[RMDB]
RNA sequence: GGGAACGACUCGAGUAGAGUCGAAAAUCUAGAAUAAUAGGAAUCGAACCUACCCCUAAGAAUUCAAAGUUCUUCGUGCUACCACGCUACACUACAAUCUAUAGUAAGGUCAGCUAAAUAAGCUAUCGCAUGCGCAAUUCUUCGGAAUUGCGCAUGCAAAAGAAACAACAACAACAAC
Reactivity to 2A3 in 0.01 (KOAc 150mM, MgCl2 10mM, bicine 150mM(pH8.5), 24C), signal-to-noise 1, nucleotides 027 to 126: u000c000u020a000g140a050a060u210a140a070u040a000g180g080a040a040u230c160g000a090a050c000c000u000a070c000c000c000c000u000a060a140g040a130a000u300u050c050a000a110a110g000u000u000c000u000u300c000g000u110g000c050u050a000c000c000a000c000g000c000u000a000c060a000c210u170a000c000a000a030u040c130u160a100u120a040g050u090a060a060g050g000u000c000a000g000c040u000a090a000a070u160a150a000g030c000u130a050u060c070
Record summary
Structure probing data (2A3) for a 177-nucleotide construct. Source: RMDB library OK1LIB, as collected in RNAgym. The 2A3 profile rests on 355 reads. 2A3 adducts were read by reverse transcription with SuperScript II with manganese.